[RMDB]
RNA sequence: GGGAACGACUCGAGUAGAGUCGAAAAGUAAACCGCCUAGAAUUUUUCUAGGUAAGGGUGAAACGGUGCGGUAAGAGCGCACCAGCGAGGUAGGUGACUACCUCGGCUAGGUAAACCCCACUGGGAGCUGUGCAGUUAAGUUCGCUUAACUGCACAGAAAAGAAACAACAACAACAAC
Reactivity to DMS in 0.01 (KOAc 150mM, MgCl2 10mM, bicine 150mM(pH8.5), 24C), signal-to-noise 1, nucleotides 027 to 126: g000u010a080a140a050c010c000g010c010c020u010a030g020a030a120u010u020u010u000u010c000u030a020g000g000u000a020a030g020g010g010u010g000a080a070a040c120g010g000u000g010c010g000g000u000a060a080g000a300g010c020g000c000a000c000c000a010g000c010g010a010g000g000u000a000g000g010u010g000a270c010u000a000c000c000u000c000g010g000c020u000a040g020g010u000a060a100a090c070c000c020c110a140c180u000g000g010g020a120g000

Chemical mapping of a 177-nucleotide RNA with DMS. It was measured as part of the RMDB library RFMREP. The RNA was probed in 150 mM KOAc, 10 mM MgCl2 and 150 mM bicine (pH 8.5) at 24 C. Reactivities are given for positions 27 through 126.